[RMDB]
RNA sequence: GGGAACGACUCGAGUAGAGUCGAAAAGAUAUGGACGAUGUUGAAGGACAACAGCCUAACGAUAAAAGAUACGUCGGAAACGACGUAUCUUUUAUCGUUAGGACAUGUCCCAACUCGUCCUAAGUCAGCUAAAGCAAAUGUUCGCAUUUGCUUUAGCAAAAGAAACAACAACAACAAC
Reactivity to DMS in 0.01 (KOAc 150mM, MgCl2 10mM, bicine 150mM(pH8.5), 24C), signal-to-noise 2, nucleotides 027 to 126: g010a050u000a300u030g000g010a010c000g050a030u020g020u000u010g000a150a230g010g000a020c000a030a130c300a190g020c000c010u010a010a010c000g010a010u000a000a010a020a000g010a050u000a010c000g010u000c000g000g000a080a110a200c000g040a010c010g010u000a000u000c000u000u000u000u000a000u000c010g000u000u000a000g020g000a010c100a090u000g000u000c000c010c000a030a000c010u000c040g020u010c000c000u000a000a040g000u000c080a110